[RMDB]
Source: RMDB library OK2TRN, as collected in RNAgym. An RNA of 177 nucleotides, treated with 2A3 and DMS and read out base by base.

RNA sequence: GGGAACGACUCGAGUAGAGUCGAAAAACAUAUCUAGAGACCUUAAUGUUCAGUGGUUAGCUCAGGGGACUAUUUAUUCUGAUGUAAUUGAGUCGGCGAAGUCUUGUGACGCAACGCAAGUGAUUAAACCAGUAGGUCAAUUCGUUGACCUACUGGUAAAAGAAACAACAACAACAAC
Reactivity to 2A3 in 0.01 (KOAc 150mM, MgCl2 10mM, bicine 150mM(pH8.5), 24C), signal-to-noise 1, nucleotides 027 to 126: a000c030a030u200a020u120c040u070a040g000a000g090a210c030c010u050u110a100a000u200g070u120u060c000a000g050u030g060g080u050u090a020g000c050u040c070a040g050g000g000g040a030c030u010a060u160u180u000a110u120u190c030u080g040a080u060g090u130a080a020u060u060g030a040g020u000c030g000g040c040g050a030a000g060u000c000u020u050g010u060g020a000c030g000c060a040a040c050g000c050a010a050g060u080g090a050u130u240a100a020
Reactivity to DMS in 0.01 (KOAc 150mM, MgCl2 10mM, bicine 150mM(pH8.5), 24C), signal-to-noise 2, nucleotides 027 to 126: a060c110a060u010a060u000c040u020a080g030a100g010a060c050c030u010u000a040a050u010g010u000u000c070a070g020u000g010g010u010u000a080g010c030u000c050a040g010g010g000g010a100c080u000a050u000u000u020a080u000u010c060u000g020a070u000g020u000a050a060u000u000g010a080g010u000c050g010g020c070g020a040a070g010u010c020u000u010g030u000g000a070c120g000c140a070a090c060g000c090a050a040g010u000g000a150u000u010a070a090

The DMS profile rests on 1,878 reads. The RNA was probed in 150 mM KOAc, 10 mM MgCl2 and 150 mM bicine (pH 8.5) at 24 C. For 2A3 the reverse transcriptase was SuperScript II with manganese. For 2A3, 710 sequencing reads were counted.